[RMDB]
RNA sequence: GGGAACGACUCGAGUAGAGUCGAAAAAGGACAUGCAGACAUAUCCCAUGAGGAAUGGUAGAGAGUACUGAAUUGCCUUGGAUGGAAAGGAGGCAGGAGAGGGGUGUGAGGGACCACUGCACAUCUUUGAGGACCAAGAAUAGUGCGUUCUCUGAGAAUCACCUUUUAAUUUCGAUUAAAAGGUGAUAAAAGAAACAACAACAACAAC
Reactivity to 2A3 in 0.01 (KOAc 150mM, MgCl2 10mM, bicine 150mM(pH8.5), 24C), signal-to-noise 7, nucleotides 027 to 156: a010g070g000a040c040a050u110g010c020a020g030a080c010a060u140a060u070c010c010c010a030u100g010a050g050g060a070a040u060g030g010u080a020g020a010g010a020g060u060a100c030u050g080a110a080u080u080g010c010c010u040u050g060g020a080u070g030g040a050a020a040g030g010a010g010g000c050a020g040g000a070g020a030g000g020g010g010u070g040u060g030a070g000g010g020a010c020c010a050c060u060g000c030a030c010a110u010c010u030u030u050g020a020g010g020a010c020c020a020a030g090a150a120u130a130g130u070g070c060g000u020u010c010u000c010u010g030a020g040a040
Reactivity to DMS in 0.01 (KOAc 150mM, MgCl2 10mM, bicine 150mM(pH8.5), 24C), signal-to-noise 3, nucleotides 027 to 156: a020g000g000a040c050a060u000g030c040a140g020a160c050a100u000a120u010c010c010c040a210u000g020a120g020g020a080a060u010g030g040u030a090g010a070g000a100g040u000a170c030u000g000a060a080u000u000g010c020c050u000u000g010g000a120u000g000g020a090a030a110g010g000a110g030g000c040a070g050g000a090g010a110g020g040g010g030u000g000u000g000a080g010g000g010a070c090c030a070c060u020g000c030a060c070a080u000c030u000u000u000g000a050g010g030a080c020c030a030a110g000a070a130u010a130g010u000g030c100g010u000u010c030u000c010u000g000a080g000a170